An RNA of 177 nucleotides, treated with 2A3 and DMS and read out base by base. For DMS the reverse transcriptase was MarathonRT. Source: RMDB library M2PK50, as collected in RNAgym. Reactivities are given for positions 27 through 126. Conditions: 150 mM KOAc, 10 mM MgCl2 and 150 mM bicine (pH 8.5), 24 C.

[RMDB]
RNA sequence: GGGAACGACUCGAGUAGAGUCGAAAAGUGGCACAGUUCGCUGUGCCACAAAGGACUACCCGUCAGGGUUAUGGCCAUACGGACAGCCGGGUCCACUGCCGAAAAUCCGUAGCUUCGGCUACGGAAAGGAGUACCGUAGGUUCGCCUACGGUACUCCAAAAGAAACAACAACAACAAC
Reactivity to 2A3 in 0.01 (KOAc 150mM, MgCl2 10mM, bicine 150mM(pH8.5), 24C), signal-to-noise 1, nucleotides 027 to 126: g000u010g000g070c000a000c000a010g020u070u100c190g060c100u000g000u010g030c010c000a000c000a000a000a000g000g030a000c000u020a020c020c000c020g120u170c150a080g030g030g020u070u150a170u300g030g000c000c000a000u040a030c010g000g000a010c020a030g020c010c020g060g000g000u020c000c000a010c020u050g000c010c000g030a110a020a000a010u060c000c010g010u010a000g000c000u040u050c240g100g000c000u000a000c000g000g000a020a010a000
Reactivity to DMS in 0.01 (KOAc 150mM, MgCl2 10mM, bicine 150mM(pH8.5), 24C), signal-to-noise 1, nucleotides 027 to 126: g040u010g020g070c000a000c000a020g020u000u010c260g000c010u010g020u000g000c010c000a000c000a030a080a100g000g010a010c000u000a020c000c000c010g000u000c300a060g000g010g000u000u000a010u060g020g020c010c000a050u000a060c000g010g000a030c040a130g000c000c000g010g000g010u000c030c010a220c080u000g030c070c000g030a260a070a060a190u000c010c000g010u000a000g030c040u000u010c230g000g010c020u000a000c000g010g000a000a000a080